[RMDB]
RNA sequence: GGGAACGACUCGAGUAGAGUCGAAAAUUCUUAAUUCCAGGCUGUCAUAUGCACCUGCCACCGCUUUUCGUCAAGAAACAGAAACCGCAACAGGGUGUCGCAGUAAUAAUCUUUCAGAAAGCGGGCAACCUUCAUUAAGGUUCGCCUUAAUGAAGGUAAAAGAAACAACAACAACAAC
Reactivity to 2A3 in 0.01 (KOAc 150mM, MgCl2 10mM, bicine 150mM(pH8.5), 24C), signal-to-noise 9, nucleotides 027 to 126: u030u010c010u050u100a110a100u120u030c030c010a010g030g000c050u030g030u120c030a090u090a070u290g040c030a040c020c020u030g030c020c010a060c030c010g030c040u030u040u060u070c030g050u040c060a090a020g020a040a110a010c030a030g090a080a050a020c030c020g040c060a100a090c040a140g090g070g040u060g040u050c040g010c050a010g020u010a000a010u050a030a060u020c030u010u060u010c010a040g010a040a030a000g010c000g000g010g000c010a020
Reactivity to DMS in 0.01 (KOAc 150mM, MgCl2 10mM, bicine 150mM(pH8.5), 24C), signal-to-noise 9, nucleotides 027 to 126: u010u010c040u000u010a070a110u020u010c060c010a080g000g010c090u010g000u010c070a100u030a080u010g000c050a050c050c030u000g000c080c070a130c040c020g010c030u000u000u010u010c050g010u020c170a060a060g000a050a070a080c130a100g000a110a070a040c040c030g020c030a080a070c100a150g020g010g020u010g010u010c050g020c040a050g010u010a050a090u010a070a180u010c030u000u020u010c100a100g000a030a030a040g010c020g010g000g010c130a100

Chemical mapping of a 177-nucleotide RNA with 2A3 and DMS. The RNA was probed in 150 mM KOAc, 10 mM MgCl2 and 150 mM bicine (pH 8.5) at 24 C.